Chemical mapping of a 177-nucleotide RNA with DMS and 2A3. For 2A3 the reverse transcriptase was SuperScript II with manganese. Conditions: 150 mM KOAc, 10 mM MgCl2 and 150 mM bicine (pH 8.5), 24 C. It was measured as part of the RMDB library OK2TRN. The DMS profile rests on 2,342 reads. Reactivities are given for positions 27 through 126.
[RMDB]
RNA sequence: GGGAACGACUCGAGUAGAGUCGAAAAGCAUGUGAAGACAAGUUGGAUGCCACAAUGAUUAAGCAAACAGUCAAUGGAAGAGUUAGUCCAUGGAUGGCCAACAACAUUUUUAUACCAGAAGAUGGAGGAUCAAUUGGAUGUUCGCAUCCAAUUGAUCAAAAGAAACAACAACAACAAC
Reactivity to DMS in 0.01 (KOAc 150mM, MgCl2 10mM, bicine 150mM(pH8.5), 24C), signal-to-noise 4, nucleotides 027 to 126: g010c050a050u010g010u000g010a100a110g020a040c090a090a120g030u000u000g000g040a180u010g020c040c030a040c100a140a120u000g010a060u010u000a060a090g010c070a070a090a100c160a040g000u000c050a070a060u000g000g000a050a080g010a100g010u010u000a090g000u010c010c030a040u000g000g020a120u020g000g000c010c040a050a060c070a050a060c100a050u010u000u000u040u010a050u010a160c070c030a070g000a060a050g000a050u000g030g000a190g000
Reactivity to 2A3 in 0.01 (KOAc 150mM, MgCl2 10mM, bicine 150mM(pH8.5), 24C), signal-to-noise 2, nucleotides 027 to 126: g020c030a050u090g060u030g120a130a110g070a060c040a100a070g000u050u050g090g020a080u090g040c010c000a030c030a060a120u110g020a100u040u140a040a120g070c060a100a010a050c010a020g080u070c020a020a110u010g050g040a050a050g060a050g220u110u170a050g040u060c010c040a020u000g010g040a060u050g060g000c040c000a000a040c020a000a000c000a060u070u080u000u070u070a160u060a150c020c030a030g020a110a020g050a110u090g000g070a030g070